RNA sequence: GGGAACGACUCGAGUAGAGUCGAAAAGAUAUGGACGUAGCAACUGUAGAUACCUGGUGGAAAUGGUGGUCGGAAACGACCACACAUUUGUGAAGCCAGGGUAUCUACAGUUGCUACGUCCUAAGUCGACUAUUGUAAAGUUCGCUUUACAAUAGUCAAAAGAAACAACAACAACAAC
Reactivity to DMS in 0.01 (KOAc 150mM, MgCl2 10mM, bicine 150mM(pH8.5), 24C), signal-to-noise 2, nucleotides 027 to 126: g000a120u010a300u010g000g010a010c000g020u000a000g000c010a010a010c010u010g020u000a010g010a010u000a020c000c000u000g000g010u000g010g010a030a010a010u000g000g010u000g000g020u000c000g020g010a090a100a210c000g010a020c000c000a000c000a020c010a000u000u000u000g010u020g000a300a300g000c000c000a010g010g010g020u010a010u000c000u000a000c010a000g000u000u010g000c000u000a000c000g020u000c000c000u000a010a070g010u010c100